[RMDB]
RNA sequence: GGGAACGACUCGAGUAGAGUCGAAAAAGGUCGAGGCGACCAGCGGUUCCUUGAAAUUGGCCUGUUGCAUCGGAUCGAAGUAGCCGCCCGGGUUGCCCGCCAUCCAGGUAUAGGUACGGGUCGAGCUUACUAUACUACAAUUCGUUGUAGUAUAGUAAAAAGAAACAACAACAACAAC
Reactivity to 2A3 in 0.01 (KOAc 150mM, MgCl2 10mM, bicine 150mM(pH8.5), 24C), signal-to-noise 9, nucleotides 027 to 126: a000g050g020u150c060g040a120g030g010c010g010a010c000c000a000g010c000g030g000u030u010c030c000u010u050g160a130a150a130u150u140g050g020c010c020u050g110u150u180g060c080a090u140c080g020g030a030u050c020g040a050a000g010u020a010g010c000c000g000c000c030c020g110g000g000u010u020g000c000c000c000g000c000c000a020u010c000c010a020g050g050u090a100u070a140g070g030u050a020c040g010g000g030u030c040g010a010g020c010u000
Reactivity to DMS in 0.01 (KOAc 150mM, MgCl2 10mM, bicine 150mM(pH8.5), 24C), signal-to-noise 8, nucleotides 027 to 126: a070g010g010u020c040g020a110g030g010c020g000a020c030c030a180g000c030g010g000u010u000c040c010u000u010g010a050a070a120u020u020g000g000c040c040u000g010u010u020g010c140a080u010c090g000g000a070u000c050g010a060a050g010u000a040g010c010c010g000c020c080c110g010g000g010u010u000g010c010c010c030g000c030c020a080u000c020c020a060g000g010u010a060u010a060g000g000u010a060c040g000g000g010u000c030g010a100g010c100u010